Source: RMDB library OK1LIB, as collected in RNAgym. Chemical mapping of a 177-nucleotide RNA with 2A3 and DMS. For DMS the reverse transcriptase was MarathonRT. The reactions ran in a buffer of 150 mM KOAc, 10 mM MgCl2 and 150 mM bicine (pH 8.5), at 24 C. For 2A3 the reverse transcriptase was SuperScript II with manganese.

RNA sequence: GGGAACGACUCGAGUAGAGUCGAAAAGAAUCAUGGGAUGUCGGCGUGACUUUUGACUAUUGUGCAUGUCCGCUUAUUGACUCUAAUAAACUACUGUUGAAGUGGAGGUGGGAUAGUGGUGCGCUAACAUAGUCCGCUUAUUCGUAAGCGGACUAUGAAAAGAAACAACAACAACAAC
Reactivity to 2A3 in 0.01 (KOAc 150mM, MgCl2 10mM, bicine 150mM(pH8.5), 24C), signal-to-noise 2, nucleotides 027 to 126: g060a000a060u050c000a030u020g010g020g090a080u010g090u050c000g010g000c030g070u150g010a050c000u000u030u010u000g040a000c040u000a020u020u220g050u030g030c000a000u010g000u060c010c000g000c050u000u030a150u040u150g000a000c020u020c000u010a000a230u090a000a090a000c010u110a010c040u040g020u020u000g040a030a000g040u000g000g000a000g000g010u030g000g040g000a010u080a020g030u000g000g030u010g000c050g000c010u020a100a000
Reactivity to DMS in 0.01 (KOAc 150mM, MgCl2 10mM, bicine 150mM(pH8.5), 24C), signal-to-noise 5, nucleotides 027 to 126: g010a070a070u010c070a080u010g000g020g000a060u020g020u010c050g010g000c050g030u010g000a030c020u010u010u010u020g010a070c070u030a060u010u030g030u040g020c020a030u020g000u010c010c020g010c040u000u010a050u020u020g020a050c040u010c040u000a060a100u030a090a090a070c110u000a090c110u000g020u010u010g000a090a060g010u010g000g000a060g000g020u020g000g000g000a070u010a050g020u010g010g000u010g010c090g010c040u020a050a220